[RMDB]
RNA sequence: GGGAACGACUCGAGUAGAGUCGAAAACUUUAGGGCAUUUGACAUCUGCAACUAUAAGGCUAAGGUUGCUGGUAUUGGAAAAUACUACAAGACUAAUACUUGUAGGUUUGUAGAAUUAGAUGACCAAUGACUUUAACGUUCGCGUUAAAGAAAAGAAACAACAACAACAAC
Reactivity to 2A3 in 0.01 (KOAc 150mM, MgCl2 10mM, bicine 150mM(pH8.5), 24C), signal-to-noise 9, nucleotides 027 to 129: c020u100u100u250a160g030g010g000c010a010u010u000u030g070a070c070a170u000c010u000g000c000a000a010c000u010a000u000a040a010g090g010c070u060a100a070g060g010u020u030g030c150u030g020g000u010a020u010u040g090g030a120a080a030a010u000a010c020u000a010c030a090a050g040a060c030u070a040a090u080a200c010u010u000g010u010a020g030g060u020u050u020g000u000a000g000a000a000u020u010a020g010a010u010g030a070c000c020a050a160u130g060a060
Reactivity to DMS in 0.01 (KOAc 150mM, MgCl2 10mM, bicine 150mM(pH8.5), 24C), signal-to-noise 6, nucleotides 027 to 129: c020u020u020u030a090g000g000g000c000a000u010u030u020g020a020c150a150u030c020u000g020c030a030a040c010u030a040u000a070a020g000g000c170u030a110a140g000g000u000u000g010c190u020g000g000u030a020u020u020g050g060a160a100a020a010u000a000c000u020a030c060a050a100g000a090c030u030a030a040u000a110c000u000u030g020u000a010g000g040u050u000u010g010u000a030g040a040a250u000u000a030g000a040u000g000a010c020c010a070a100u030g030a140